The record gives the reactivity of an RNA of 177 nucleotides to DMS and 2A3. High DMS reactivity at an A or C suggests that its Watson-Crick edge is free. High 2A3 reactivity points to a flexible backbone, as in loops and unpaired stretches. The 2A3 profile rests on 5,381 reads. Source: RMDB library OK2TST, as collected in RNAgym. The RNA was probed in 150 mM KOAc, 10 mM MgCl2 and 150 mM bicine (pH 8.5) at 24 C. Values cover nucleotides 27 to 126.
[RMDB]
RNA sequence: GGGAACGACUCGAGUAGAGUCGAAAACUAGUCCGGGGUCGAGGUAGACUUUUUUAUCGAAAAGGUAGGUUGUAUUGGGAUUAUCCUUGGCGAAAUUCCCAGCAGGUAACACCGAUAACUCACCCUCCAUUACAACUCCUUUCGAGGAGUUGUAAUGAAAAGAAACAACAACAACAAC
Reactivity to DMS in 0.01 (KOAc 150mM, MgCl2 10mM, bicine 150mM(pH8.5), 24C), signal-to-noise 8, nucleotides 027 to 126: c090u000a110g010u010c080c090g000g020g000g020u000c100g020a020g010g010u010a100g000a140c020u000u000u010u000u010u010a090u020c200g000a040a020a040a040g000g010u000a100g010g010u000u010g010u000a100u000u000g000g000g010a060u000u010a120u000c010c020u000u010g030g020c130g010a020a040a090u010u000c010c000c000a040g010c160a070g000g010u010a080a080c150a070c020c010g010a100u010a050a080c030u000c020a070c020c010c010u000c150
Reactivity to 2A3 in 0.01 (KOAc 150mM, MgCl2 10mM, bicine 150mM(pH8.5), 24C), signal-to-noise 4, nucleotides 027 to 126: c030u040a030g140u070c070c040g010g000g030g000u070c120g010a000g000g050u110a020g050a040c000u040u020u030u010u060u130a150u120c080g030a010a030a040a020g050g020u070a040g070g080u050u060g040u060a120u130u100g010g000g000a010u000u040a050u050c030c060u070u180g130g020c190g040a020a030a040u090u030c000c010c000a000g000c020a010g120g120u110a080a000c020a010c040c010g020a020u030a070a020c010u010c010a020c000c010c010u000c000